[RMDB]
RNA sequence: GGGAACGACUCGAGUAGAGUCGAAAAGAUAUGGAUGCGUUGAAAACGAAAAUCCUGUGGGAGCCUGGUGGUCGGAAACGACCGAGAGGGCAUCGAUCACAGGAUUUUCGUUGGAGCAUCCUAAGUCGAACUAAGACUGGUUCGCCAGUCUUAGUUCAAAAGAAACAACAACAACAAC
Reactivity to DMS in 0.01 (KOAc 150mM, MgCl2 10mM, bicine 150mM(pH8.5), 24C), signal-to-noise 2, nucleotides 027 to 126: g000a100u000a300u000g010g010a030u010g020c000g000u020u010g010a220a090a020a040c040g010a010a010a000a000u000c000c000u000g010u000g000g000g000a040g030c000c000u000g010g020u010g000g030u010c000g030g000a130a080a180c030g030a010c000c010g020a110g030a300g000g000g020c010a100u000c170g000a080u010c010a030c010a010g010g010a010u000u000u000u010c000g020u000u000g000g000a090g020c010a010u010c000c000u010a010a080g010u020c070